[RMDB]
RNA sequence: GGGAACGACUCGAGUAGAGUCGAAAAUGAUAUAAUCUGCAUCCGACAACGAUCACCAACUUCCACCUUGAUCGAUUGGUCGCAUAAUCCAUUAAAUUUGGAAGUAGUCGCUCAUGCUUAAAAAUACUCGUGGAUCACGGUUCGCCGUGAUCCACGAAAAAGAAACAACAACAACAAC
Reactivity to 2A3 in 0.01 (KOAc 150mM, MgCl2 10mM, bicine 150mM(pH8.5), 24C), signal-to-noise 1, nucleotides 027 to 126: u070g000a000u040a010u040a290a130u040c040u000g010c000a070u000c120c000g110a130c040a300a030c080g000a000u000c000a000c050c020a000a000c060u010u000c000c000a060c000c000u010u000g000a000u030c020g220a230u040u040g010g010u010c050g050c030a000u230a160a000u030c000c000a000u040u040a100a230a200u040u070u040g000g000a120a000g000u040a000g030u000c000g010c000u040c000a120u040g030c090u300u300a030a030a030a030a030u120a060c030
Structure probing data (2A3) for a 177-nucleotide construct. The reactions ran in a buffer of 150 mM KOAc, 10 mM MgCl2 and 150 mM bicine (pH 8.5), at 24 C.